[RMDB]
RNA sequence: GGGAACGACUCGAGUAGAGUCGAAAAAAUUGCUUGCGCCAAAGAACGUUUGAAAUAUGUUACUGCAUCAACGUGCUCAGAAAGAAGUUGAGAGUGACAAACCACUUUAAAGGUUAAGCCAGGCUUGUUUUUAUCAAUAGCCUUGACCAAACUCUCAUGCUCCGACGCAUUUCGAUGCGUCGGAGCAAAAAGAAACAACAACAACAAC
Reactivity to 2A3 in 0.01 (KOAc 150mM, MgCl2 10mM, bicine 150mM(pH8.5), 24C), signal-to-noise 1, nucleotides 027 to 156: a000a010u010u060g000c000u010u010g000c000g010c060c010a010a010a030g030a150a000c020g090u070u050u220g070a110a060a000u150a000u020g040u080u130a040c050u080g040c000a080u000c030a020a000c020g010u070g040c010u000c080a000g060a000a030a000g030a020a000g030u020u010g000a000g010a000g000u020g000a000c000a000a000a000c010c000a050c060u050u060u140a180a100a000g000g000u030u030a020a000g000c040c040a030g000g000c000u010u010g010u070u040u070u070u100a170u130c020a050a020u020a010g080c010c000u020u080g000a040c000c030a120a000a000c000u090c010u000c000a030
An RNA of 207 nucleotides, treated with 2A3 and read out base by base. The RNA was probed in 150 mM KOAc, 10 mM MgCl2 and 150 mM bicine (pH 8.5) at 24 C. Values are in units of 0.01, from 0 to 300, in steps of 10. Values cover nucleotides 27 to 156. For 2A3, 578 sequencing reads were counted.